[RMDB]
RNA sequence: GGGAACGACUCGAGUAGAGUCGAAAACAGCAUAGGCAGCUGAGGUCCCCUGGGCCAGUCACUGGUAACUCGGGUCCACUCCCCACUCAAGAACCAUGUGGCUUGAGCAAUCCCCAAACUUGGUUUCCUUUGCUGCCAAAGCAGGCACUGGAUGGAAUAAUCAUAUAGUAUUCGUACUAUAUGAUUAAAAAGAAACAACAACAACAAC
Reactivity to DMS in 0.01 (KOAc 150mM, MgCl2 10mM, bicine 150mM(pH8.5), 24C), signal-to-noise 4, nucleotides 027 to 156: c040a070g000c030a110u000a160g010g020c030a030g010c030u020g020a060g000g010u000c070c020c030c030u000g010g030g010c030c020a080g030u010c050a050c050u000g000g000u010a080a130c030u000c010g000g010g000u000c010c030a110c040u000c010c010c000c080a180c030u000c030a020a050g030a300a080c010c020a090u010g040u010g010g020c000u010u000g020a080g010c030a110a150u000c000c010c010c020a050a090a100c060u000u020g010g000u000u000u000c000c010u000u000u000g020c040u000g020c030c030a040a060a150g020c050a130g010g030c030a070c050u000g020g000a130u000g010g000a110a180
Reactivity to 2A3 in 0.01 (KOAc 150mM, MgCl2 10mM, bicine 150mM(pH8.5), 24C), signal-to-noise 4, nucleotides 027 to 156: c020a010g040c020a040u090a170g050g000c010a010g000c000u010g010a010g010g000u050c020c030c000c010u060g000g050g000c010c010a010g030u050c020a010c030u010g000g050u070a170a060c000u010c050g000g030g000u060c050c020a170c110u090c030c010c010c000a020c020u040c020a010a050g010a080a050c000c000a060u200g030u080g030g000c000u030u060g020a020g040c000a030a200u130c020c000c000c000a010a090a090c070u090u090g040g000u050u040u080c000c010u020u010u040g000c000u000g000c000c000a000a010a010g000c030a010g040g010c050a010c070u060g040g050a100u130g100g030a070a010